[RMDB]
RNA sequence: GGGAACGACUCGAGUAGAGUCGAAAAUGGAGCCACAAGCUUGACGUGAACUAAAGAGCUUACAUGGAGAGGUCAGGGUAGGAAGCAUAUUAUCAUGGUGCUUUUUAUGUUAACUUAUAUCCAGUGAAGAACAAGUGGAUGUGGAACUUGUACAACGCUCCUAUAGCCUUUUCGAAGGCUAUAGGAGAAAAGAAACAACAACAACAAC
Reactivity to DMS in 0.01 (KOAc 150mM, MgCl2 10mM, bicine 150mM(pH8.5), 24C), signal-to-noise 3, nucleotides 027 to 156: u000g030g010a150g070c010c040a070c100a100a160g010c030u010u010g020a130c060g000u000g000a070a130c040u000a130a100a200g000a090g020c030u010u000a090c100a080u010g010g000a070g020a050g010g000u000c050a060g060g020g050u000a020g000g030a060a060g000c020a060u000a050u000u000a100u020c160a130u000g050g040u000g030c020u020u000u000u000u000a010u020g010u000u000a060a070c060u000u020a090u020a130u010c000c010a090g000u000g010a090a100g000a090a060c050a070a040g020u000g010g000a100u010g000u020g020g010a080a080c060u010u000g000u000a110c040a040a110c110g000
Reactivity to 2A3 in 0.01 (KOAc 150mM, MgCl2 10mM, bicine 150mM(pH8.5), 24C), signal-to-noise 5, nucleotides 027 to 156: u070g050g000a020g040c010c010a060c020a030a030g020c010u040u040g020a040c040g100u070g060a090a000c030u060a150a070a020g080a010g030c010u030u050a020c030a080u090g020g010a030g010a000g050g000u050c060a030g000g040g000u020a010g000g030a010a000g030c010a010u050a040u200u160a090u150c050a060u100g100g010u020g020c000u100u030u030u030u040a070u110g100u060u080a050a000c030u130u050a030u010a030u220c010c020a040g020u030g110a050a060g050a080a030c030a050a050g020u010g020g060a070u050g000u020g030g020a040a020c010u040u050g020u030a050c010a090a010c080g000
An RNA of 207 nucleotides, treated with DMS and 2A3 and read out base by base. For 2A3, 3,402 sequencing reads were counted. For DMS the reverse transcriptase was MarathonRT. Conditions: 150 mM KOAc, 10 mM MgCl2 and 150 mM bicine (pH 8.5), 24 C. The data come from the RNA Mapping Database (RMDB), library OK3TST.